[RMDB]
Structure probing data (2A3 and DMS) for a 177-nucleotide construct. Source: RMDB library OK2TST, as collected in RNAgym. For 2A3, 6,267 sequencing reads were counted.

RNA sequence: GGGAACGACUCGAGUAGAGUCGAAAAGGUUCUUAGCAGACUGUCCGACGAGAACUUCGCCGUUCUUAGCGAAAGCAACAACCGAUGGGGUGGUGCGGGAACCCUCAGAGUUAGCGAUAACCUGUGGGAGUACGCAAAAAUUCGUUUUUGCGUACUCAAAAGAAACAACAACAACAAC
Reactivity to 2A3 in 0.01 (KOAc 150mM, MgCl2 10mM, bicine 150mM(pH8.5), 24C), signal-to-noise 4, nucleotides 027 to 126: g040g000u040u020c020u070u100a040g000c040a040g050a190c040u080g070u030c010c020g010a060c040g000a050g000a070a020c000u060u040c060g040c030c000g060u100u040c020u060u120a020g010c020g060a070a060a000g030c040a010a060c000a040a010c050c010g100a120u090g000g010g030g090u150g030g060u110g020c080g000g000g020a020a020c000c020c010u010c010a030g060a010g040u000u010a010g020c010g050a030u010a030a000c000c000u000g010u040g050g050
Reactivity to DMS in 0.01 (KOAc 150mM, MgCl2 10mM, bicine 150mM(pH8.5), 24C), signal-to-noise 5, nucleotides 027 to 126: g020g010u000u000c050u000u010a140g020c050a100g020a120c060u000g010u010c050c010g030a120c080g000a070g000a080a050c070u000u000c190g040c080c100g000u000u000c050u000u000a120g020c050g010a070a080a110g000c050a070a060c130a070a070c080c040g010a140u010g000g010g010g010u000g020g010u000g000c100g000g010g010a110a110c080c000c000u000c000a020g000a120g000u000u000a020g000c250g000a140u000a010a010c000c010u000g010u000g000g010
The RNA was probed in 150 mM KOAc, 10 mM MgCl2 and 150 mM bicine (pH 8.5) at 24 C.
The DMS profile rests on 5,619 reads.